[RMDB]
RNA sequence: GGGAACGACUCGAGUAGAGUCGAAAAUUUGCCUGUGGAUGUGGGGCAUCAUAUACAGCUAAUGAUGUCGAAGUCCAAUCAUCUGGCAUGAUUAAGCCAAAUGCUCUUCUUUGUGCUACUUGCCCCUAGGUGUAUGACUGUUCGCAGUCAUACACCUAAAAGAAACAACAACAACAAC
Reactivity to DMS in 0.01 (KOAc 150mM, MgCl2 10mM, bicine 150mM(pH8.5), 24C), signal-to-noise 1, nucleotides 027 to 126: u000u010u000g010c010c000u000g080u030g010g000a000u000g030u000g020g040g020g000c000a010u000c010a000u000a110u000a120c120a140g020c110u050a140a030u000g030a020u000g000u000c050g010a120a300g000u000c050c020a050a130u000c140a050u040c110u000g020g040c000a010u020g000a070u000u000a050a110g000c130c050a000a040a040u000g000c040u000c080u000u000c080u010u030u010g010u050g000c020u000a060c110u000u000g000c000c000c050c170u000
Reactivity to 2A3 in 0.01 (KOAc 150mM, MgCl2 10mM, bicine 150mM(pH8.5), 24C), signal-to-noise 2, nucleotides 027 to 126: u030u020u060g000c000c020u080g020u110g050g000a030u040g070u110g140g090g000g000c010a000u000c000a010u130a020u030a070c090a020g060c110u140a140a020u020g000a010u010g020u020c040g020a040a040g030u060c020c000a000a050u030c030a020u040c020u010g010g010c010a030u010g020a050u150u060a050a020g010c000c000a020a020a040u130g020c030u000c000u120u060c000u000u020u040g010u060g050c000u000a070c030u020u070g060c030c000c000c000u010

The record gives the reactivity of an RNA of 177 nucleotides to DMS and 2A3. For 2A3, 1,369 sequencing reads were counted. For 2A3 the reverse transcriptase was SuperScript II with manganese. The reactions ran in a buffer of 150 mM KOAc, 10 mM MgCl2 and 150 mM bicine (pH 8.5), at 24 C. The DMS profile rests on 695 reads. High 2A3 reactivity points to a flexible backbone, as in loops and unpaired stretches.